[RMDB]
RNA sequence: GGGAACGACUCGAGUAGAGUCGAAAAUGGCGGUCGACCAGGGUGGCCGUCAGUGUGGUAAUGGCCCAGGUCAUCUGCUGCAUGCGUUCGGCAUGGGCGAAUCCUUGCGCCUGGGAGCGAAGCUGGAGCCCCAGACAUAGUUCGCUAUGUCUGGGGCAAAAGAAACAACAACAACAAC
Reactivity to 2A3 in 0.01 (KOAc 150mM, MgCl2 10mM, bicine 150mM(pH8.5), 24C), signal-to-noise 2, nucleotides 027 to 126: u060g000g030c020g000g000u030c080g020a110c010c010a140g100g070g000u130g010g060c020c040g000u000c020a020g020u140g070u090g030g150u150a080a040u120g120g030c000c030c000a000g020g020u020c000a050u020c140u150g000c000u060g220c050a000u020g020c000g280u100u300c050g090g000c070a000u000g020g000g040c010g020a040a030u120c050c080u080u060g000c050g000c000c000u010g010g000g010a150g050c020g060a130a040g060c030u000g020g000a040
Reactivity to DMS in 0.01 (KOAc 150mM, MgCl2 10mM, bicine 150mM(pH8.5), 24C), signal-to-noise 1, nucleotides 027 to 126: u000g000g000c040g010g020u000c020g000a070c010c010a050g000g000g030u050g000g000c010c000g040u050c000a020g020u000g000u000g000g000u000a010a050u000g020g020c000c000c040a040g000g000u000c080a140u000c050u040g100c000u000g000c000a000u000g000c000g010u010u070c180g010g020c050a000u000g000g010g040c030g000a190a040u050c140c030u020u050g010c150g000c000c000u000g000g000g000a120g000c090g050a110a110g000c010u010g000g010a300
This 177-nucleotide RNA was probed chemically with 2A3 and DMS. It was measured as part of the RMDB library OK1LIB. For DMS, 1,962 sequencing reads were counted.